[RMDB]
RNA sequence: GGGAACGACUCGAGUAGAGUCGAAAAGCUGAAGAAUAUUUCCUAGUCUACUUUGAAAUAUAUGAUACAUUUGUGUUAAGGCUAGUCACGCUGCUGUGGAAUAGAAGGCCAGAAUUGAUCACUAUCAUCUGAGAGUAACUUUGUACCCAUCACUGAAUAAUUAAUGAGUGUUCGCACUCAUUAAUUAAAAAGAAACAACAACAACAAC
Reactivity to DMS in 0.01 (KOAc 150mM, MgCl2 10mM, bicine 150mM(pH8.5), 24C), signal-to-noise 3, nucleotides 027 to 156: g020c030u000g010a070a130g010a150a080u000a040u000u000u010c000c030u000a060g010u010c090u010a090c050u000u000u010g000a040a070a070u000a040u010a050u010g010a140u000a070c020a180u010u000u000g020u000g020u000u000a080a190g010g000c030u020a080g010u000c050a080c130g040c010u010g000c040u010g020u000g000g020a080a090u000a110g020a110a060g010g020c040c010a080g030a070a100u010u000g000a080u010c060a060c070u000a180u000c040a080u000c050u000g000a100g000a120g030u000a020a090c040u000u000u000g000u000a060c020c000c050a120u010c070a100c090u020g000a080a200
Reactivity to 2A3 in 0.01 (KOAc 150mM, MgCl2 10mM, bicine 150mM(pH8.5), 24C), signal-to-noise 4, nucleotides 027 to 156: g020c040u070g030a030a020g070a190a040u090a110u150u070u040c020c010u020a030g050u010c050u070a130c030u110u130u140g030a040a060a010u100a010u050a050u180g070a040u080a100c090a130u050u120u190g050u030g030u070u090a070a030g010g000c020u020a000g040u060c010a030c080g030c030u070g030c050u050g030u070g030g030a010a020u040a100g090a100a030g070g000c020c010a010g060a040a050u070u070g050a030u040c050a020c090u050a040u080c030a020u030c030u050g030a020g000a000g150u030a060a030c010u030u050u050g020u050a070c000c000c020a030u080c050a020c060u040g050a060a110

Chemical mapping of a 207-nucleotide RNA with DMS and 2A3. It was measured as part of the RMDB library OK3TST. Conditions: 150 mM KOAc, 10 mM MgCl2 and 150 mM bicine (pH 8.5), 24 C. Reactivities are rounded to 0.1 and cut off at 0 and 3. For DMS the reverse transcriptase was MarathonRT.